[RMDB]
RNA sequence: GGGAACGACUCGAGUAGAGUCGAAAAUAGGAUGCCCAAAUUUCUGUUUAGAGCUAUUCCUUGUGUUUUGGGCGUAGACACAAAGUGUUUUUAAGUGUAGAACAGCAUCUAAUGGUAAUUUUUGAAGGUGAUAGUGAAUAUUCGUAUUCACUAUCACAAAAGAAACAACAACAACAAC
Reactivity to DMS in 0.01 (KOAc 150mM, MgCl2 10mM, bicine 150mM(pH8.5), 24C), signal-to-noise 8, nucleotides 027 to 126: u000a100g010g010a080u010g010c010c010c020a060a060a080u010u000u000c030u000g010u010u000u000a060g010a160g020c060u000a080u010u000c020c020u010u000g020u000g010u000u000u000u000g010g000g010c040g020u000a040g010a020c020a020c020a040a060a120g010u010g010u000u010u000u010u010a050a140g020u000g010u000a130g010a030a030c040a050g010c060a040u000c030u000a050a060u000g000g010u020a040a050u000u000u000u000u000g010a180a120g020
Reactivity to 2A3 in 0.01 (KOAc 150mM, MgCl2 10mM, bicine 150mM(pH8.5), 24C), signal-to-noise 6, nucleotides 027 to 126: u150a040g080g050a040u110g020c010c000c000a000a100a030u070u090u020c020u030g110u050u040u080a110g000a020g080c030u060a040u060u050c010c000u030u010g030u010g020u050u030u050u080g050g020g000c020g010u010a020g000a000c010a000c000a030a120a050g070u090g060u040u050u030u070u160a160a060g030u060g040u110a020g010a060a010c010a010g020c010a070u010c030u060a050a040u030g040g030u070a100a150u050u080u080u110u230g110a110a040g140